[RMDB]
Structure probing data (DMS and 2A3) for a 207-nucleotide construct. The reactions ran in a buffer of 150 mM KOAc, 10 mM MgCl2 and 150 mM bicine (pH 8.5), at 24 C. For DMS, 1,642 sequencing reads were counted. Reactivities are given for positions 27 through 156. It was measured as part of the RMDB library M2RFPK.
RNA sequence: GGGAACGACUCGAGUAGAGUCGAAAAGAAGGGUGAAAGCCCUUGAUACUGUAGUGGAAAUUAUAAAUAAGAAGAGUUCUGAGUUGCUUAAGCAGAACUAAAAUAAUAAGACAAGCAUUAUUACAAACAUGGCGAGGUAAGUUCGCUUACCUCGCAAGCUAGAACGAUAGUUCGCUAUCGUUCUAGCAAAAGAAACAACAACAACAAC
Reactivity to DMS in 0.01 (KOAc 150mM, MgCl2 10mM, bicine 150mM(pH8.5), 24C), signal-to-noise 1, nucleotides 027 to 156: g000a020a010g000g050g040u010g000a140a150a290g040c000c000c040u000u000g010a070u000a100c130u000g000u010a070g000u010g000g010a040a040a100u020u000a000u000a150a030a060u020a040a180g010a160a130g020a190g000u000u010c010u030g010a150g010u020u020g050c030u010u000a060a170g010c040a080g010a000a040c000u040a000a040a100a060u000a130a100u010a000a060g040a180c060a080a120g020c110a050u000u010a020u000u010a040c080a070a030a050c030a060u000g030g000c000g000a070g000g000u000a020a010g000u000u000c300g040c030u000u000a000c000c000u050c010g000c000a000a040
Reactivity to 2A3 in 0.01 (KOAc 150mM, MgCl2 10mM, bicine 150mM(pH8.5), 24C), signal-to-noise 3, nucleotides 027 to 156: g040a000a010g010g010g010u030g030a080a020a010g010c000c000c000u000u000g020a020u050a060c070u080g050u100a020g020u040g060g040a030a070a110u120u120a110u200a230a100a020u200a080a020g060a070a010g020a010g040u030u000c010u000g020a030g030u060u050g060c040u050u010a080a020g000c010a000g000a000a000c050u030a010a010a010a000u100a010a010u090a050a010g030a010c030a020a000g010c010a000u020u080a050u120u130a210c100a070a080a010c030a060u150g080g000c000g000a000g000g000u000a000a010g000u030u030c040g000c090u000u000a000c000c000u000c010g000c000a000a000